[RMDB]
RNA sequence: GGGAACGACUCGAGUAGAGUCGAAAAGUAGAAUCUGUCAAGCAAAACCCCAAAACCUUACACUGAGAGCAUUAAGCCUGAUUACUCUUUAAAUCAAAUCAGGCAAUAGAGAGAAACUCGAGAGGUGAAACGGGAGUAAUGUUCGCAUUACUCCCAAGUAUGAUGGUACGUUCGCGUACCAUCAUACAAAAGAAACAACAACAACAAC
Reactivity to 2A3 in 0.01 (KOAc 150mM, MgCl2 10mM, bicine 150mM(pH8.5), 24C), signal-to-noise 3, nucleotides 027 to 156: g060u080a030g070a100a100u070c060u110g120u140c100a040a050g030c070a050a050a080a180c000c020c000c040a000a080a060a100c050c060u090u090a090c090a060c140u130g050a010g010a010g080c010a020u060u100a120a000g000c020c000u000g000a000u010u050a060c030u040c080u220u220u160a090a130a090u140c070a040a010a000u000c000a010g000g000c000a000a000u010a000g020a000g010a000g050a060a060a040c000u000c000g060a080g000a000g170g000u030g030a080a090a070c080g000g010g000a000g000u000a000a000u010g020u040u030c170g010c120a000u000u000a000c000u000c000c000c000a010a000
Reactivity to DMS in 0.01 (KOAc 150mM, MgCl2 10mM, bicine 150mM(pH8.5), 24C), signal-to-noise 1, nucleotides 027 to 156: g000u010a130g020a090a120u000c090u000g010u020c060a030a100g010c090a120a070a070a050c010c010c010c020a030a090a070a090c020c040u000u000a050c090a050c120u000g000a110g000a010g010c000a090u000u000a100a260g010c000c000u010g000a070u000u010a060c090u050c130u000u000u000a090a140a130u000c070a120a110a060u010c000a000g140g040c000a020a110u020a070g040a150g000a120g010a040a160a090c020u000c040g000a080g010a060g010g080u020g000a040a110a080c070g000g010g000a040g030u000a000a010u010g060u000u000c260g020c000a010u000u000a000c000u000c000c000c000a000a020
Background:
Structure probing data (2A3 and DMS) for a 207-nucleotide construct. Conditions: 150 mM KOAc, 10 mM MgCl2 and 150 mM bicine (pH 8.5), 24 C. For 2A3, 1,597 sequencing reads were counted. It was measured as part of the RMDB library M2RFPK. Reactivities are rounded to 0.1 and cut off at 0 and 3. 2A3 adducts were read by reverse transcription with SuperScript II with manganese.